[RMDB]
Source: RMDB library RNAMAK, as collected in RNAgym.
Chemical mapping of a 207-nucleotide RNA with 2A3.
For 2A3 the reverse transcriptase was SuperScript II with manganese.

RNA sequence: GGGAACGACUCGAGUAGAGUCGAAAACUCUUCAUGUUCGCAUGAAGAGAAAAAAACCUUUGUGUAGCUAUGAAGCACACGCUUGCCCCAUUGGGGAACUACAAGUGUGUGUGGAGCUACACUCUGGUAAAAAGUGAUACGCUUCGGCGUAUCACAACUUAGCGCAAAGUUUCGACUUUGCGCUAAGAAAAGAAACAACAACAACAAC
Reactivity to 2A3 in 0.01 (KOAc 150mM, MgCl2 10mM, bicine 150mM(pH8.5), 24C), signal-to-noise 2, nucleotides 027 to 156: c020u000c010u050u000c000a010u000g050u080u150c230g020c180a020u010g000a010a000g000a010g000a160a000a010a010a000a010a000c010c000u050u040u000g000u000g010u000a000g010c020u020a080u300g020a040a010g000c000a000c000a000c000g010c010u000u010g010c000c000c000c080a170u130u300g000g000g000g040a050a060c030u230a030c120a000a020g000u000g000u010g000u000g030u000g030g000a000g000c000u000a000c000a000c000u000c000u000g000g030u050a100a070a000a070a020g010u010g000a000u010a000c000g000c000u020u120c200g100g000c000g020u000a000u000c010a020c000a000a000